[RMDB]
RNA sequence: GGGAACGACUCGAGUAGAGUCGAAAAGAAGGAUCUGGUAUUAUCCUAAACAUUUACUUAAUUUCAUCUGAAAUUUUAACACAAAACCUGGGGUGCCUUGGGAAUUCCUUACAUUUUUCUCUAUGUAUUUACUUAGAGUAUCUUCUUUACUAUUAAAGUCAUUUAGGAUAUUCGUAUCCUAAAUGACAAAAGAAACAACAACAACAAC
Reactivity to 2A3 in 0.01 (KOAc 150mM, MgCl2 10mM, bicine 150mM(pH8.5), 24C), signal-to-noise 1, nucleotides 027 to 156: g090a000a010g020g040a010u010c000u050g020g010u050a030u120u050a050u090c010c000u010a060a170a000c070a060u070u110u140a050c000u060u080a080a050u100u030u010c000a160u070c190u130g050a050a060a070u090u110u030u110a210a000c050a000c060a050a140a000a000c000c010u030g000g000g000g000u070g050c030c000u040u050g080g000g100a070a090u050u010c010c000u050u110a040c030a110u100u090u010u030u050c010u000c000u050a040u040g000u000a100u100u140u110a030c000u030u040a010g000a000g010u040a030u000c030u040u040c000u000u070u140a040c000u120a050u300u290a000a070a290